The data come from the RNA Mapping Database (RMDB), library OK3TST.
Chemical mapping of a 207-nucleotide RNA with 2A3.
[RMDB]
RNA sequence: GGGAACGACUCGAGUAGAGUCGAAAACAUCAUAUCAUAGUCCAUCAUGUUAACUCCCAUGAUGUCUUGCCACACAAAUACAAAUUUGUCGCUUCCUACAGCUAGACCAACUUCUCUUACAUAUGACAAAUAGUUUUCAAAUGUGCUAGUCCAUGGACUAGGCCGCAAAUUUCGAUUUGCGGCCUAGAAAAGAAACAACAACAACAAC
Reactivity to 2A3 in 0.01 (KOAc 150mM, MgCl2 10mM, bicine 150mM(pH8.5), 24C), signal-to-noise 2, nucleotides 027 to 156: c070a020u130c030a020u080a070u180c130a140u110a090g060u020c040c010a010u010c010a000u080g040u110u020a060a060c020u010c010c000c000a000u050g020a020u040g040u030c000u030u030g030c030c010a030c010a040c030a110a060a090u130a090c070a060a170a140u050u050u050g060u020c010g000c010u050u030c010c000u020a030c020a060g020c010u040a020g080a130c040c000a040a100c060u090u020c020u010c000u110u050a000c050a070u150a080u120g030a030c030a000a120a100u050a050g040u000u030u030u020c040a070a090a050u120g030u010g020c010u000a000g010u020c100c020a060u090g030g000a000